[RMDB]
RNA sequence: GGGAACGACUCGAGUAGAGUCGAAAAGCUGGUCCGGAUUGGCCCCAGCGAACACUUGACGAACGGAUAGUCCCGUCUUGUGGAUUAGGACGUUCUAGGUCCGGUCUGCCCCCUAGUUCGUCCGAAAGCGUCAUUAUGGUUUCGACCAUAAUGACGCAAAAGAAACAACAACAACAAC
Reactivity to DMS in 0.01 (KOAc 150mM, MgCl2 10mM, bicine 150mM(pH8.5), 24C), signal-to-noise 2, nucleotides 027 to 126: g000c070u000g000g000u030c070c050g000g000a220u020u040g000g020c120c060c020c000a040g000c020g000a110a100c040a030c080u000u020g000a030c020g020a100a070c030g010g020a180u070a200g000u000c120c000c030g000u000c120u000u200g000u000g000g000a120u050u020a060g000g000a000c000g000u020u000c000u000a030g010g000u000c080c170g000g000u000c080u040g000c040c050c120c000c000u020a030g040u000u010c000g000u000c020c000g000a020a030a070
Reactivity to 2A3 in 0.01 (KOAc 150mM, MgCl2 10mM, bicine 150mM(pH8.5), 24C), signal-to-noise 4, nucleotides 027 to 126: g000c000u020g000g010u100c030c050g120g100a300u120u300g170g000c070c060c000c000a020g000c010g000a040a010c040a000c010u010u020g010a010c000g030a160a010c040g040g080a130u140a220g060u180c030c020c000g000u000c020u010u020g020u040g010g050a090u050u110a060g010g000a010c000g010u000u000c000u000a000g020g000u080c130c030g040g000u070c060u090g180c000c000c000c000c000u000a000g000u000u000c000g000u000c000c000g000a010a000a010

Chemical mapping of a 177-nucleotide RNA with DMS and 2A3.
For 2A3, 2,567 sequencing reads were counted.
2A3 adducts were read by reverse transcription with SuperScript II with manganese.